[RMDB]
Conditions: 150 mM KOAc, 10 mM MgCl2 and 150 mM bicine (pH 8.5), 24 C. The record gives the reactivity of an RNA of 177 nucleotides to 2A3 and DMS. For 2A3, 1,372 sequencing reads were counted. Source: RMDB library OK2TST, as collected in RNAgym.
RNA sequence: GGGAACGACUCGAGUAGAGUCGAAAAUGAGGUCAACUAUCCUAAAACCAUCGAGGGUAACCUCCAAAUGGCUAAGGCUGUACCAGACGAUGCGCCUCAAUUUGUGCGCGAAGUCUUGGCCGAGAUCUCCACUCGUCAGAUUCGUCUGACGAGUGGAAAAAGAAACAACAACAACAAC
Reactivity to 2A3 in 0.01 (KOAc 150mM, MgCl2 10mM, bicine 150mM(pH8.5), 24C), signal-to-noise 2, nucleotides 027 to 126: u090g010a030g000g010u050c020a040a030c070u080a060u110c000c000u060a060a030a040a080c010c000a050u080c070g040a010g050g030g030u090a050a110c010c010u010c000c030a010a300a100u090g020g010c010u010a000a050g000g040c010u040g000u020a060c030c010a020g020a030c010g080a110u140g020c010g000c020c010u120c040a080a150u180u160u140g070u130g000c010g000c020g030a050a000g020u000c010u000u000g000g020c010c010g030a020g000a050u040c010
Reactivity to DMS in 0.01 (KOAc 150mM, MgCl2 10mM, bicine 150mM(pH8.5), 24C), signal-to-noise 2, nucleotides 027 to 126: u010g020a150g010g000u000c030a040a090c190u010a130u020c010c000u000a030a090a140a090c040c060a030u000c080g000a070g000g030g000u000a180a120c010c000u000c010c170a040a080a160u000g000g010c010u000a210a010g020g000c150u000g020u000a120c130c020a060g000a020c020g020a110u020g040c010g000c000c000u000c220a100a170u010u000u030g010u010g010c000g020c000g000a060a180g010u000c010u000u010g010g000c090c000g000a090g010a060u000c090